[RMDB]
RNA sequence: GGGAACGACUCGAGUAGAGUCGAAAAUAACCGCGUUAAUGUUUGCUCCAUAAUCUAUUAUCGCGUAGAUGAAUCGCUUCUCGGCUCGCAUCUUAGUGUGACUUGACUUGUAAUAAUUGCUUUUGUAGAACGUGGAUAUGUGUUUACAGUAGUAAUGCAGUAUGUGGUUUUUCGAAACCACAUACUGAAAAGAAACAACAACAACAAC
Reactivity to 2A3 in 0.01 (KOAc 150mM, MgCl2 10mM, bicine 150mM(pH8.5), 24C), signal-to-noise 4, nucleotides 027 to 156: u070a010a000c040c000g020c030g010u000u000a080a040u050g040u040u050u130g070c050u080c050c030a120u110a220a070u080c050u110a030u040u060a050u070c020g000c070g060u030a040g020a150u090g060a060a090u050c040g010c020u080u030c020u040c040g010g030c000u010c030g020c020a110u010c060u060u080a070g020u030g040u030g080a040c000u040u040g030a040c010u050u060g050u090a060a100u070a140a040u100u050g000c000u050u070u090u050g020u010a010g000a090a010c020g020u060g050g060a040u060a080u280g090u020g030u020u050u030a040c030a020g050u070a020g020u040a080a020u130g040
Reactivity to DMS in 0.01 (KOAc 150mM, MgCl2 10mM, bicine 150mM(pH8.5), 24C), signal-to-noise 3, nucleotides 027 to 156: u000a070a180c140c000g030c070g000u010u020a060a060u010g010u000u000u000g020c030u010c080c080a110u000a120a110u000c030u000a040u000u000a070u000c110g030c060g010u000a090g020a100u010g010a110a100u000c030g010c020u010u000c010u010c010g020g000c040u020c050g010c050a090u000c050u000u000a100g020u000g000u000g000a100c040u000u010g020a050c080u010u010g000u010a080a120u000a040a090u000u000g020c020u000u000u010u000g020u000a060g010a040a040c030g020u000g020g020a100u000a080u010g030u000g020u000u000u000a050c030a070g020u010a030g020u000a030a110u010g020

This 207-nucleotide RNA was probed chemically with 2A3 and DMS. Source: RMDB library OK3TST, as collected in RNAgym.